Chemical mapping of a 177-nucleotide RNA with 2A3 and DMS. The RNA was probed in 150 mM KOAc, 10 mM MgCl2 and 150 mM bicine (pH 8.5) at 24 C. DMS (dimethyl sulfate) methylates the pairing face of unpaired adenines and cytosines. Reactivities are given for positions 27 through 126.

[RMDB]
RNA sequence: GGGAACGACUCGAGUAGAGUCGAAAAUACGCGCUUCGCCAACCAGGUAAUCAAACAGGAAGAUGAUGGCAAGCAUCACCACAAUCAGGAUGGAUCCAUAGGCAAUCGCGAUACCGUAUUCGCCAUCCGAAUGUAACUGAUUCGUCAGUUACAUUCGAAAAGAAACAACAACAACAAC
Reactivity to 2A3 in 0.01 (KOAc 150mM, MgCl2 10mM, bicine 150mM(pH8.5), 24C), signal-to-noise 9, nucleotides 027 to 126: u090a010c030g040c010g000c060u020u030c050g000c020c010a060a090c040c030a020g060g030u080a080a070u100c080a050a060a140c030a060g090g050a070a090g040a060u080g010a010u040g030g020c050a050a030g080c010a020u030c020a010c020c000a040c050a050a100u130c050a030g100g000a040u040g030g030a040u050c020c010a060u080a080g020g000c000a030a060u060c040g000c010g040a010u040a040c040c020g020u040a090u030u100c090g010c050c010a040u050c050
Reactivity to DMS in 0.01 (KOAc 150mM, MgCl2 10mM, bicine 150mM(pH8.5), 24C), signal-to-noise 9, nucleotides 027 to 126: u000a080c070g000c110g020c080u010u000c080g030c010c060a110a150c070c050a070g000g010u000a070a070u010c090a060a080a140c130a090g000g010a080a100g000a060u000g010a070u000g000g020c130a090a100g000c010a040u000c030a070c020c020a070c120a100a070u010c080a080g010g010a100u000g000g010a070u000c020c040a060u000a070g000g000c040a050a060u010c160g000c020g000a060u000a060c100c030g000u000a070u000u000c100g010c030c040a080u010c100